Chemical mapping of a 177-nucleotide RNA with DMS and 2A3. Conditions: 150 mM KOAc, 10 mM MgCl2 and 150 mM bicine (pH 8.5), 24 C.
RNA sequence: GGGAACGACUCGAGUAGAGUCGAAAAACAAGGUGGAGUCGCUGGGGUCUGGCAUAGCUGCGCAAGACCGCUGGGGAGCCUUUGAGAUACUGGCGAGGGAACAUGGUUACAGGCUGUUAGGACUGGGGAAUUACCUCGGUUUCGACCGAGGUAAUUCAAAAGAAACAACAACAACAAC
Reactivity to DMS in 0.01 (KOAc 150mM, MgCl2 10mM, bicine 150mM(pH8.5), 24C), signal-to-noise 2, nucleotides 027 to 126: a140c090a080a140g000g000u000g000g000a130g010u010c020g050c020u000g000g010g000g030u020c010u000g020g030c010a040u000a090g030c130u010g000c010g070c020a090a050g000a040c040c020g020c030u000g000g000g000g000a070g010c040c050u020u020u030g020a140g010a120u030a020c090u000g000g000c040g000a120g000g030g000a040a140c170a020u000g000g020u000u020a060c160a070g000g000c060u000g000u010u000a060g000g000a220c030u000g000g000g010
Reactivity to 2A3 in 0.01 (KOAc 150mM, MgCl2 10mM, bicine 150mM(pH8.5), 24C), signal-to-noise 2, nucleotides 027 to 126: a000c070a040a000g040g020u060g090g000a090g100u150c070g030c060u040g020g000g000g000u010c000u040g060g000c010a040u060a160g060c140u080g000c090g030c030a020a070g040a090c020c020g000c080u020g020g000g000g020a020g030c000c000u050u040u040g120a140g000a040u070a060c030u020g050g030c040g030a050g060g030g000a040a000c040a040u120g030g010u050u080a020c020a020g010g000c000u020g050u100u070a050g000g010a050c050u040g040g010g010
Annotation: For DMS, 2,930 sequencing reads were counted. The 2A3 profile rests on 1,290 reads. It was measured as part of the RMDB library OK1LIB.